[RMDB]
RNA sequence: GGGAACGACUCGAGUAGAGUCGAAAAUGGCUGGGCAGGACAAUGUGGAGUCGGGCUGGUCCCUGCACACACACACACACGCACCCCCAGAUGCUGCUGUGGGGAAAGGCGGCGUAAUGGGGCAGUGGUUCAUGCCACAGACAGAUGUGCCCGCCUCACCCGCUGUAUACUUCGGUAUACAGCGGGUAAAAGAAACAACAACAACAAC
Reactivity to 2A3 in 0.01 (KOAc 150mM, MgCl2 10mM, bicine 150mM(pH8.5), 24C), signal-to-noise 2, nucleotides 027 to 156: u130g020g000c080u100g020g000g000c050a010g040g060a050c050a070a190u180g030u130g140g010a110g020u060c040g000g020g030c020u090g080g010u190c020c000c030u090g030c060a080c010a000c000a000c000a000c000a000c000a170c000a000c010g040c040a050c020c000c000c000c000a000g070a130u080g010c010u010g000c000u030g100u280g040g010g010g120a010a010a010g090g000c000g000g000c010g010u040a060a140u050g020g000g010g000c000a020g020u060g050g000u060u030c020a090u190g010c000c020a150c000a050g040a000c000a000g050a050u120g030u020g070c000c010c000g020c000c000u030c040